Notes:
This 177-nucleotide RNA was probed chemically with DMS and 2A3. The data come from the RNA Mapping Database (RMDB), library M2PK50. For 2A3, 1,188 sequencing reads were counted. For 2A3 the reverse transcriptase was SuperScript II with manganese.
RNA sequence: GGGAACGACUCGAGUAGAGUCGAAAACCCUGGAACUUCGGUUCCAGGGCAUGGAGCAAAUCCCCCGCUGAAACGGAGCGAUAUCCGUCCCAAAAAUAUAAAAAGCUGAUGAUUUCGAUCAUCAGAAAUAGGUAAAAAUAUUCGUAUUUUUACCUAUAAAAGAAACAACAACAACAAC
Reactivity to DMS in 0.01 (KOAc 150mM, MgCl2 10mM, bicine 150mM(pH8.5), 24C), signal-to-noise 2, nucleotides 027 to 126: c020c020c000u000g000g000a020a010c010u010u000c170g020g020u000u000c010c000a010g020g000g000c020a020u000g010g000a070g010c150a090a150a240u010c000c000c010c040c010g000c000u000g000a050a130a090c000g000g030a030g020c020g020a010u000a010u000c010c020g000u000c010c050c040a030a050a060a120a040u020a080u020a070a080a110a130a170g010c000u000g000a010u000g000a020u010u000u010c170g000a010u000c000a010u010c000a000g000a010a080
Reactivity to 2A3 in 0.01 (KOAc 150mM, MgCl2 10mM, bicine 150mM(pH8.5), 24C), signal-to-noise 1, nucleotides 027 to 126: c000c000c010u020g010g020a000a000c040u040u040c240g120g000u020u000c000c020a000g000g010g000c010a000u050g080g020a070g090c110a210a040a270u060c010c010c010c000c000g000c030u040g110a040a060a000c000g010g000a030g000c000g000a010u000a020u010c000c000g000u000c010c000c000a080a110a000a060a020u150a030u130a100a180a090a030a010g080c010u000g000a000u000g010a000u030u020u110c170g030a020u000c000a000u000c000a000g000a000a050